[RMDB]
RNA sequence: GGGAACGACUCGAGUAGAGUCGAAAAUUAAACAAUGAUGUUAUUUUACAUAUGUUAGACUAAUGAAAUGAUUUGAUUGUAAAUUAGUAACUGAGAAUGUGCGGACAAAUGGGUUCGCCCAUUUGUCGAUAAUUUCCCACUUCGGUGGGAAAUUAUCAAAAGAAACAACAACAACAAC
Reactivity to DMS in 0.01 (KOAc 150mM, MgCl2 10mM, bicine 150mM(pH8.5), 24C), signal-to-noise 2, nucleotides 027 to 126: u000u000a110a080a060c040a060a050u000g010a080u010g000u000u000a030u000u000u000u000a030c050a050u000a080u000g010u000u000a090g000a210c080u010a060a050u010g010a060a020a030u000g000a050u000u000u000g000a050u000u000g000u000a050a090a070u010u000a060g020u010a050a090c030u010g020a080g010a100a080u000g010u000g000c140g030g020a000c000a000a010a020u000g010g010g050u010u010c230g010c000c000c000a010u000u000u000g000u000c000
Reactivity to 2A3 in 0.01 (KOAc 150mM, MgCl2 10mM, bicine 150mM(pH8.5), 24C), signal-to-noise 1, nucleotides 027 to 126: u050u060a050a040a020c060a040a060u140g020a020u060g090u100u060a110u020u180u030u080a050c010a040u190a020u130g010u020u060a110g040a070c030u040a100a000u050g040a030a050a030u030g000a040u100u140u120g080a100u040u070g030u060a030a060a050u000u040a050g050u020a080a040c060u040g010a000g070a140a090u050g020u080g040c080g010g010a000c000a000a000a020u050g000g020g010u030u020c200g140c010c020c000a010u000u000u000g000u000c000